RNA sequence: GGGAACGACUCGAGUAGAGUCGAAAAUACCGGCCGAGGUUCGGGGCGCCCAAAAUGAUCGGGGCUCAAAUCCACCACCGAGACCUGGCCGCACCCCUCACAGGGUGAUCGCGUAGGUCGGCGUUCUGUCAAACUGCUGAUUCGUCAGCAGUUUGACAAAAGAAACAACAACAACAAC
Reactivity to 2A3 in 0.01 (KOAc 150mM, MgCl2 10mM, bicine 150mM(pH8.5), 24C), signal-to-noise 1, nucleotides 027 to 126: u110a000c020c080g000g030c000c020g130a070g000g000u050u110c060g050g000g000g000c040g010c000c000c030a120a130a060a050u160g100a090u070c100g000g010g000g000c030u060c090a150a150a000u030c030c010a010c030c000a110c050c030g010a040g020a080c020c020u070g010g000c000c000g010c000a000c040c000c020c010u060c010a110c060a010g010g000g010u000g060a110u150c060g000c010g060u080a010g000g000u000c000g000g010c040g030u040u010c060u070

Source: RMDB library RFM100, as collected in RNAgym. An RNA of 177 nucleotides, treated with 2A3 and read out base by base. The RNA was probed in 150 mM KOAc, 10 mM MgCl2 and 150 mM bicine (pH 8.5) at 24 C. The 2A3 profile rests on 728 reads.